RNA sequence: GGGAACGACUCGAGUAGAGUCGAAAACUAUGGAGCGAGAUGAACAUACCUGAUAAUAUGAGGUUCGAUUUUAUAAAGGGCUUGUGUUGCAGACCGGAUAUAAAUAAGAGGCAUCUCUUCGCUAUCCUCAUCCAGUAUCUUUCGAGAUACUGGAUGAAAAAGAAACAACAACAACAAC
Reactivity to DMS in 0.01 (KOAc 150mM, MgCl2 10mM, bicine 150mM(pH8.5), 24C), signal-to-noise 6, nucleotides 027 to 126: c070u000a090u010g000g000a040g020c140g010a030g010a030u000g000a070a100c090a120u020a100c020c010u000g020a090u010a090a120u010a300u010g010a040g000g010u000u010c070g010a160u010u010u000u010a030u010a010a060a300g000g000g000c040u000u000g020u000g020u010u010g010c030a030g000a070c020c020g000g000a300u000a020u000a010a030a050u010a060a170g000a080g020g010c070a030u000c020u000c050u000u010c100g000c070u000a050u010c020c050
Reactivity to 2A3 in 0.01 (KOAc 150mM, MgCl2 10mM, bicine 150mM(pH8.5), 24C), signal-to-noise 3, nucleotides 027 to 126: c060u070a100u170g040g000a050g010c060g000a010g010a050u060g030a100a050c040a120u210a070c030c010u040g100a060u080a300a060u160a150u260g080a030g020g000u040u030c020g020a060u000u010u090u020a070u040a030a050a030g040g010g000c020u070u050g050u050g060u130u210g020c020a010g010a060c010c000g020g020a020u030a000u010a050a060a020u140a030a050g030a010g040g000c010a020u000c020u000c000u100u060c020g010c030u060a080u080c010c010

About this RNA:
Structure probing data (DMS and 2A3) for a 177-nucleotide construct. Values cover nucleotides 27 to 126. 2A3 adducts were read by reverse transcription with SuperScript II with manganese. The 2A3 profile rests on 4,032 reads.